Conditions: 150 mM KOAc, 10 mM MgCl2 and 150 mM bicine (pH 8.5), 24 C. The record gives the reactivity of an RNA of 207 nucleotides to DMS and 2A3. The 2A3 profile rests on 1,739 reads. 2A3 adducts were read by reverse transcription with SuperScript II with manganese. The DMS profile rests on 2,644 reads. High 2A3 reactivity points to a flexible backbone, as in loops and unpaired stretches. Source: RMDB library M2RFPK, as collected in RNAgym.
RNA sequence: GGGAACGACUCGAGUAGAGUCGAAAAAUACACCAGCAGUAAGACUCAGCGACCGUCACAACAAGGUUGUGCUGGUAUCCGACGGUCGUAUAGCCCUGUCUUGCAGGUUGCCUUGCACUGACGUGCCACACCAUUUACAGAUUCGUCUGUAAAUGAAUGAUACGGGAAUGUUCGCAUUCCCGUAUCAAAAAGAAACAACAACAACAAC
Reactivity to DMS in 0.01 (KOAc 150mM, MgCl2 10mM, bicine 150mM(pH8.5), 24C), signal-to-noise 2, nucleotides 027 to 156: a160u010a130c090a180c040c010a100g000c030a090g000u040a060a050g000a100c030u000c050a230g050c020g000a040c010c010g000u000c030a170c060a180a080c130a060a120g000g040u000u000g000u000g010c030u000g030g010u000a060u000c070c060g010a000c030g010g030u000c000g010u000a030u000a080g010c020c060c030u000g000u000c030u000u000g020c010a180g020g000u000u000g010c030c120u000u000g010c040a110c100u010g020a170c170g030u010g000c020c100a090c040a170c090c000a020u000u000u000a030c000a050g020a080u000u000c300g050u010c000u000g020u000a000a000a000u000g000a030a100
Reactivity to 2A3 in 0.01 (KOAc 150mM, MgCl2 10mM, bicine 150mM(pH8.5), 24C), signal-to-noise 2, nucleotides 027 to 156: a000u100a020c060a000c010c000a000g010c020a020g050u090a040a010g020a060c040u030c150a030g010c000g000a000c000c000g000u000c010a000c030a290a080c050a150a120g090g000u040u010g020u030g020c010u010g000g020u010a030u020c030c060g000a000c000g010g000u000c020g010u030a030u070a060g140c000c000c020u040g000u020c040u010u040g000c000a030g050g000u050u030g040c030c030u050u040g000c010a000c020u150g030a090c130g030u030g000c040c030a090c000a040c020c010a000u000u020u000a000c000a010g000a000u020u100c100g060u010c080u000g010u000a000a010a000u000g000a020a090